Conditions: 150 mM KOAc, 10 mM MgCl2 and 150 mM bicine (pH 8.5), 24 C.
The record gives the reactivity of an RNA of 177 nucleotides to DMS and 2A3.
It was measured as part of the RMDB libraries RFM100 and RFMREP.
The 2A3 profile rests on 8,523 reads.
RNA sequence: GGGAACGACUCGAGUAGAGUCGAAAAGGCAGUACCCGGCGCCUCCACCCGAGCAGCUGACAAUGCGAGAUCUCGUUUUUACGAGUUCUCAUUCCGUGCGACGGACUUUGUCGAGCUGCUCCGGCGGUUUAGACAAGCGAUUCGUCGCUUGUCUAAAAAAAGAAACAACAACAACAAC
Reactivity to DMS in 0.01 (KOAc 150mM, MgCl2 10mM, bicine 150mM(pH8.5), 24C), signal-to-noise 4, nucleotides 027 to 126: g000g000c020a050g010u010a130c020c020c010g010g000c070g010c030c010u010c000c010a070c010c010c170g000a000g010c010a000g000c000u000g000a000c010a010a010u000g000c150g000a010g010a000u000c000u010c000g020u000u030u030u010u060a000c010g000a020g000u000u000c000u010c000a140u000u000c000c000g010u000g020c200g000a110c000g000g000a110c030u000u000u000g010u000c000g000a030g020c000u000g000c010u000c000c200g000g020c060g010g000
Reactivity to 2A3 in 0.01 (KOAc 150mM, MgCl2 10mM, bicine 150mM(pH8.5), 24C), signal-to-noise 5, nucleotides 027 to 126: g030g020c020a020g040u070a100c000c000c000g020g030c020g010c000c000u000c000c010a020c000c000c010g000a000g000c000a000g000c000u000g000a000c010a020a010u040g040c120g030a000g000a010u000c000u000c000g020u010u030u060u160u300a000c000g000a000g000u010u000c000u000c010a020u060u000c010c010g050u110g250c150g140a100c010g050g000a000c000u010u010u000g010u000c030g090a010g000c000u000g000c000u000c000c010g010g000c020g000g000